An RNA of 207 nucleotides, treated with 2A3 and read out base by base. For 2A3 the reverse transcriptase was SuperScript II with manganese.
RNA sequence: GGGAACGACUCGAGUAGAGUCGAAAAUUUUGUAUGGAAUCUUUAAAAAUAGAAUUGAUCCUAUCAUAUUUAUCAACGUUUGAGACUACCUCAUCCCAUAUCUUCGUACUUCAUUACUAGAUUUACGUAGGUAGAUUUAGUGCGGAAGCUAACGAACCAUGGAGUCAGUGUUCGCACUGACUCCAUGAAAAGAAACAACAACAACAAC
Reactivity to 2A3 in 0.01 (KOAc 150mM, MgCl2 10mM, bicine 150mM(pH8.5), 24C), signal-to-noise 2, nucleotides 027 to 156: u080u130u070u100g000u020a160u140g030g040a280a190u040c020u050u300u110a170a280a100a090a050u300a130g090a170a090u070u050g010a020u070c000c010u030a060u110c080a060u040a150u090u120u040a120u160c080a100a000c080g060u160u000u000g020a020g070a070c040u100a080c020c000u020c000a070u050c010c010c010a010u050a050u080c110u070u010c000g000u000a000c010u000u000c000a020u050u050a000c020u000a010g000a000u000u000u010a020c030g100u110a060g300g000u000a000g050a000u050u000u000a000g000u010g000c070g020g010a010a010g000c050u030a050a000c000g010a010a000c050

The reactions ran in a buffer of 150 mM KOAc, 10 mM MgCl2 and 150 mM bicine (pH 8.5), at 24 C.
It was measured as part of the RMDB library ARCHII.